[RMDB]
Chemical mapping of a 177-nucleotide RNA with DMS and 2A3. For 2A3 the reverse transcriptase was SuperScript II with manganese. The 2A3 profile rests on 2,170 reads. The RNA was probed in 150 mM KOAc, 10 mM MgCl2 and 150 mM bicine (pH 8.5) at 24 C. Reactivities are given for positions 27 through 126.
RNA sequence: GGGAACGACUCGAGUAGAGUCGAAAAUGGCCAUGCUUCGGCAUGGCCACUUGCGUAGCUCGCAAAUUUUUUUAGGUACGCUUAAUAAAAAUUUGCGAUAUAAGUUGGGGUUGUUCGCAACCCCAAACCUCAGACAUAGAUUCGUCUAUGUCUGAGGAAAAGAAACAACAACAACAAC
Reactivity to DMS in 0.01 (KOAc 150mM, MgCl2 10mM, bicine 150mM(pH8.5), 24C), signal-to-noise 1, nucleotides 027 to 126: u000g010g010c010c010a010u000g000c000u000u020c220g020g010c020a000u000g000g000c000c010a000c010u000u000g000c090g010u010a150g020c260u000c000g030c000a010a000a000u000u000u000u000u000u000u000a010g010g000u000a090c200g020c000u000u000a000a030u010a010a010a000a020a020u000u000u000g010c000g000a010u000a040u010a080a090g010u000u000g000g000g010g000u000u000g010u000u010c180g010c020a030a020c000c000c000c000a000a000a050
Reactivity to 2A3 in 0.01 (KOAc 150mM, MgCl2 10mM, bicine 150mM(pH8.5), 24C), signal-to-noise 2, nucleotides 027 to 126: u050g000g010c030c000a010u000g000c040u070u110c230g070g010c020a000u010g020g030c000c010a000c000u030u090g000c010g210u130a060g100c020u000c000g010c010a000a000a000u020u020u000u000u010u010u010a020g000g000u020a020c190g050c110u000u010a020a020u090a240a060a010a000a000u010u030u010g000c000g000a000u000a000u030a130a050g070u020u030g000g000g010g020u020u000g000u060u070c150g040c060a000a000c000c010c000c000a000a010a000